[RMDB]
RNA sequence: GGGAACGACUCGAGUAGAGUCGAAAACUAUGCAGCAUCACCCUGCCCAUGCCGGGCAUGAAAUUGCCGACUGGCCUCAUGCUGACCGCACGCAAUGACUCGGACAAGAGGCUGCUUGCUGCAGCCAGUGACCAUGAGUGUUCGCACUCAUGGUCACAAAAGAAACAACAACAACAAC
Reactivity to 2A3 in 0.01 (KOAc 150mM, MgCl2 10mM, bicine 150mM(pH8.5), 24C), signal-to-noise 2, nucleotides 027 to 126: c040u060a040u180g000c030a000g020c000a020u020c030a030c000c000c000u060g080c040c020c010a060u160g050c050c020g030g020g020c020a000u020g010a010a090a030u080u030g040c000c030g090a110c100u110g030g000c000c000u100c040a050u120g000c020u030g060a080c010c000g030c010a050c020g000c030a010a110u120g040a120c030u000c050g010g060a050c030a050a010g010a010g050g030c010u000g000c010u000u070g020c010u030g000c000a010g000c000c040a030
Reactivity to DMS in 0.01 (KOAc 150mM, MgCl2 10mM, bicine 150mM(pH8.5), 24C), signal-to-noise 2, nucleotides 027 to 126: c070u000a080u000g000c070a050g010c020a010u000c010a040c090c050c020u000g000c080c030c040a120u010g010c060c090g040g000g070c040a000u020g040a020a100a090u000u000g000c030c020g000a130c100u000g000g000c050c110u020c040a090u000g000c110u010g000a050c110c070g010c080a100c070g000c070a050a080u010g000a080c050u000c030g010g010a090c110a100a120g000a100g000g020c040u000g000c020u000u010g030c120u000g010c000a020g000c080c050a060
An RNA of 177 nucleotides, treated with 2A3 and DMS and read out base by base.
The RNA was probed in 150 mM KOAc, 10 mM MgCl2 and 150 mM bicine (pH 8.5) at 24 C.
High DMS reactivity at an A or C suggests that its Watson-Crick edge is free.
Values cover nucleotides 27 to 126.
For 2A3 the reverse transcriptase was SuperScript II with manganese.
It was measured as part of the RMDB library OK2TST.